[RMDB]
The data come from the RNA Mapping Database (RMDB), library OK1LIB.
Structure probing data (2A3) for a 177-nucleotide construct.
Reactivities are given for positions 27 through 126.
RNA sequence: GGGAACGACUCGAGUAGAGUCGAAAACGUGUUCGGUGACGCCGACGCCGUGUCGGUCGGCGACUACCACAUUCCGAAGAUGAUCGGCUGGACGCUUGUGGGCCGGCCGGUCGACGACGCCGGCAUGGCGCACCUGUGACUUCGGUCACAGGUGCGCAAAAGAAACAACAACAACAAC
Reactivity to 2A3 in 0.01 (KOAc 150mM, MgCl2 10mM, bicine 150mM(pH8.5), 24C), signal-to-noise 2, nucleotides 027 to 126: c080g070u060g020u160u130c000g000g000u000g060a090c010g010c010c000g020a040c080g040c010c040g160u160g120u120c030g030g080u000c000g000g000c000g000a010c060u080a070c000c010a010c100a100u130u040c020c070g000a090a040g050a120u230g000a000u000c030g000g010c000u030g000g000a000c020g120c160u190u100g090u210g170g120g050c000c000g000g000c000c000g000g000u010c000g000a000c000g000a030c000g020c030c000g000g030c010a080u060g010
Background: The RNA was probed in 150 mM KOAc, 10 mM MgCl2 and 150 mM bicine (pH 8.5) at 24 C.